[RMDB]
RNA sequence: GGGAACGACUCGAGUAGAGUCGAAAAGAUAUGGAGGGAGGCAACAGCAUGUGUAUCGGAAACGAUACCAUGACAUGCCUUUUCCUAAGUCAAAACCAUUUCAAAGUGUUCGCACUUUGAAAUGGAAGUAAUGCUAGGGGUUCGCCCCUAGCAUUACAAAAGAAACAACAACAACAAC
Reactivity to DMS in 0.01 (KOAc 150mM, MgCl2 10mM, bicine 150mM(pH8.5), 24C), signal-to-noise 2, nucleotides 027 to 126: g000a030u000a300u000g000g010a030g000g010g010a000g000g010c000a010a060c230a150g020c010a000u000g000u020g030u000a010u010c000g000g000a100a050a090c030g000a000u000a010c000c000a000u000g000a050c090a190u010g000c000c000u000u000u000u000c000c000u000a010a160g000u000c020a100a090a080a240c020c000a000u000u010u000c000a010a010a000g010u000g000u000u010c230g030c000a000c000u000u000u000g000a000a000a000u000g010g000a000a050
Reactivity to 2A3 in 0.01 (KOAc 150mM, MgCl2 10mM, bicine 150mM(pH8.5), 24C), signal-to-noise 1, nucleotides 027 to 126: g040a010u060a010u110g030g000a020g060g160g030a020g010g000c010a030a030c070a260g140c010a020u090g300u040g020u070a010u000c010g000g020a060a000a010c030g000a020u010a000c000c000a000u010g000a100c000a020u030g010c000c090u000u010u010u010c000c000u000a060a030g020u000c040a010a000a060a150c000c000a000u010u000u010c000a000a010a000g010u010g050u070u140c280g100c130a000c000u000u010u000g000a020a010a000u000g010g010a050a000